[RMDB]
RNA sequence: GGGAACGACUCGAGUAGAGUCGAAAAACGGCUGGCUACGGCCAGCCGAAUCGGGCCAAAGGCAGUCGCCCGACGACACAGGCGAUCGUUCGCCUAAGCGCUGCACACGACUAUACGUAGUCGUGAAUUGAUCACGCAACCUUCGGGUUGCGUGAAAUCUAUUCGCAAUGUUCGCAUUGCGAAUAGAAAAAGAAACAACAACAACAAC
Reactivity to 2A3 in 0.01 (KOAc 150mM, MgCl2 10mM, bicine 150mM(pH8.5), 24C), signal-to-noise 1, nucleotides 027 to 156: a000c010g000g000c000u010g000g040c000u060a040c240g090g000c050c000a000g040c010c000g000a000a010u010c010g030g000g020c030c060a230a050a070g130g040c010a010g010u020c030g000c000c030c040g000a040c040g060a010c040a000c040a080g030g060c030g010a030u130c090g190u130u040c010g160c020c010u010a000a050g020c030g010c080u070g000c000a020c000a000c040g000a000c000u010a010u090a040c300g160u060a000g010u010c000g000u000g010a010a000u090u060g070a020u000c000a000c000g030c000a000a010c000c000u030u190c240g070g000g010u000u000g000c010g000u000g000a010a000a000
An RNA of 207 nucleotides, treated with 2A3 and read out base by base. The RNA was probed in 150 mM KOAc, 10 mM MgCl2 and 150 mM bicine (pH 8.5) at 24 C. 2A3 adducts were read by reverse transcription with SuperScript II with manganese.